RNA sequence: GGGAACGACUCGAGUAGAGUCGAAAAGGGGUCCCACAGUUACUGGGGGCUGUAGCAGACAUUGGAGGCCAGGCCUGUCCAUGGCACUAGAGUGAAACCCAGGUGGGGUGUGGCAUCUGCAAGGGAAUAGUAUACGAUUUUUCGAAAUCGUAUACUAAAAAGAAACAACAACAACAAC
Reactivity to DMS in 0.01 (KOAc 150mM, MgCl2 10mM, bicine 150mM(pH8.5), 24C), signal-to-noise 9, nucleotides 027 to 126: g010g010g020g010u000c020c010c010a110c090a090g010u000u000a120c070u000g010g000g010g010g010c040u000g000u000a060g010c060a070g000a080c080a070u010u010g010g010a140g000g010c020c070a110g010g010c040c040u000g000u000c030c040a070u000g000g010c060a130c040u000a060g000a080g020u000g000a090a100a110c050c010c020a050g010g020u000g000g000g010g010u000g010u000g000g010c080a070u000c040u000g010c070a080a080g000g000g010a090a140
Reactivity to 2A3 in 0.01 (KOAc 150mM, MgCl2 10mM, bicine 150mM(pH8.5), 24C), signal-to-noise 4, nucleotides 027 to 126: g000g000g000g020u020c010c040c000a030c020a040g150u140u160a080c050u050g000g020g010g030g010c010u020g040u070a020g000c060a030g010a060c020a060u080u200g040g040a050g000g050c040c040a050g030g120c000c020u060g060u020c030c020a070u050g020g000c020a000c070u040a030g050a030g120u070g060a110a020a020c010c000c000a010g040g020u060g020g040g000g010u110g020u040g030g000c010a050u020c060u080g030c030a050a050g040g010g000a080a060

Structure probing data (DMS and 2A3) for a 177-nucleotide construct. For DMS, 19,069 sequencing reads were counted. For DMS the reverse transcriptase was MarathonRT. Reactivities are rounded to 0.1 and cut off at 0 and 3. Source: RMDB library OK2TRN, as collected in RNAgym. The RNA was probed in 150 mM KOAc, 10 mM MgCl2 and 150 mM bicine (pH 8.5) at 24 C.